[RMDB]
About this RNA
An RNA of 207 nucleotides, treated with 2A3 and read out base by base. For 2A3, 701 sequencing reads were counted. As a SHAPE reagent, 2A3 marks flexible, mostly unpaired nucleotides at the ribose 2'-OH. It was measured as part of the RMDB library M2RFPK.
RNA sequence: GGGAACGACUCGAGUAGAGUCGAAAAUAACCGCUAUACUUGUAUAGGCGAUUAAUAAAUCUUCUGUAAAUGCUGUAAGAGGAUUACCCCUUGAGGUUUCAGCACUAGGCUGCUCUAGCGAUUAAUCACAACGAUUUGGUCUUCGGACCAAAUCGAACCUUACAGUCGGGUUCGCCCGACUGUAAGGAAAAGAAACAACAACAACAAC
Reactivity to 2A3 in 0.01 (KOAc 150mM, MgCl2 10mM, bicine 150mM(pH8.5), 24C), signal-to-noise 2, nucleotides 027 to 156: u060a010a040c020c000g000c000u030a020u040a180c060u150u180g120u100a090u130a100g120g010c030g030a060u080u060a080a080u050a080a080a030u010c010u060u000c000u030g210u200a060a100a120u130g050c050u040g070u140a010a050g010a010g010g000a010u010u060a040c020c010c000c000u000u060g030a080g090g000u040u120u260c030a000g040c010a010c050u070a060g150g000c040u000g000c020u080c020u030a020g030c030g050a060u050u250a110a120u180c100a080c050a230a110c060g010a000u000u000u000g000g000u000c000u030u040c150g100g010a000c000c000a000a000a000u010c010g000a000a010